Record summary: This 177-nucleotide RNA was probed chemically with DMS and 2A3. The reactions ran in a buffer of 150 mM KOAc, 10 mM MgCl2 and 150 mM bicine (pH 8.5), at 24 C. The DMS profile rests on 1,536 reads. For 2A3 the reverse transcriptase was SuperScript II with manganese. 2A3 is a SHAPE reagent: it acylates the 2'-hydroxyl of flexible nucleotides of all four kinds. Values are in units of 0.01, from 0 to 300, in steps of 10.

[RMDB]
RNA sequence: GGGAACGACUCGAGUAGAGUCGAAAACGUUUACGCUGACGGAGCGGGAUGGGAAACUGUACGGUCGCGGCACGUCGGACAUGAAGGGCUUUGUUGCCGUGUGCAUGUCUCUUGCCCCCGAGCUCCACGUAUGGGUGCAGUUCGCUGCACCCAUACGAAAAGAAACAACAACAACAAC
Reactivity to DMS in 0.01 (KOAc 150mM, MgCl2 10mM, bicine 150mM(pH8.5), 24C), signal-to-noise 1, nucleotides 027 to 126: c080g010u010u010u000a110c120g020c100u010g010a150c110g030g000a060g010c010g000g010g020a060u000g030g010g000a180a050a030c010u010g010u000a070c020g000g010u010c130g000c090g000g000c030a060c050g020u010c140g000g000a040c070a090u000g020a110a190g000g010g000c030u000u010u000g020u030u000g010c010c000g050u000g000u000g010c010a050u000g020u000c010u000c030u000u000g010c030c000c000c010c030g000a150g010c000u010c020c020a200
Reactivity to 2A3 in 0.01 (KOAc 150mM, MgCl2 10mM, bicine 150mM(pH8.5), 24C), signal-to-noise 2, nucleotides 027 to 126: c010g000u040u100u150a090c100g020c090u120g110a040c070g000g030a010g000c030g000g020g080a120u110g060g000g020a020a100a050c020u040g100u200a030c080g050g070u090c040g020c040g050g000c000a000c010g060u030c060g000g070a050c020a060u190g100a150a120g110g030g000c100u220u180u100g100u260u100g040c000c090g100u070g020u050g040c080a100u150g000u010c000u000c000u010u040g050c020c010c010c010c010g040a040g020c030u000c010c060a030